[RMDB]
RNA sequence: GGGAACGACUCGAGUAGAGUCGAAAAAAAGUCUUCACUGUCUGGGCAACCAUCUGUCAGAUGAAAAGAGGGAGGAAUACGGCAACCGAUCGAACGAUUGACAGUCUACCCGUCUGCGCACUCGCAGGUCCCUUGAAGGUUUCGACCUUCAAGGGACAAAAGAAACAACAACAACAAC
Reactivity to DMS in 0.01 (KOAc 150mM, MgCl2 10mM, bicine 150mM(pH8.5), 24C), signal-to-noise 1, nucleotides 027 to 126: a070a080a110g020u000c040u030u000c130a010c040u000g020u000c040u010g000g010g020c060a110a080c120c010a090u030c050u000g030u000c110a060g030a080u020g000a080a030a020a030g010a120g000g020g020a220g000g020a000a100u000a040c130g000g010c000a040a020c020c040g010a090u000c060g010a030a090c060g000a060u020u000g000a080c100a060g010u000c080u000a110c090c000c030g050u050c030u000g010c020g000c190a030c230u000c050g000c090a070g000
Reactivity to 2A3 in 0.01 (KOAc 150mM, MgCl2 10mM, bicine 150mM(pH8.5), 24C), signal-to-noise 1, nucleotides 027 to 126: a010a000a010g080u070c060u140u120c040a010c100u020g040u000c020u040g030g020g060c000a040a060c030c020a070u060c050u050g180u160c030a030g070a200u030g120a030a000a170a000g060a030g040g020g020a030g000g020a080a050u070a050c040g000g120c000a000a030c020c050g040a030u080c040g000a050a120c080g050a060u000u130g020a000c010a000g040u000c000u060a060c010c030c060g020u110c010u010g020c010g000c110a050c070u090c040g050c000a000g000
The record gives the reactivity of an RNA of 177 nucleotides to DMS and 2A3. For DMS the reverse transcriptase was MarathonRT. Reactivities are rounded to 0.1 and cut off at 0 and 3. For DMS, 665 sequencing reads were counted. The reactions ran in a buffer of 150 mM KOAc, 10 mM MgCl2 and 150 mM bicine (pH 8.5), at 24 C.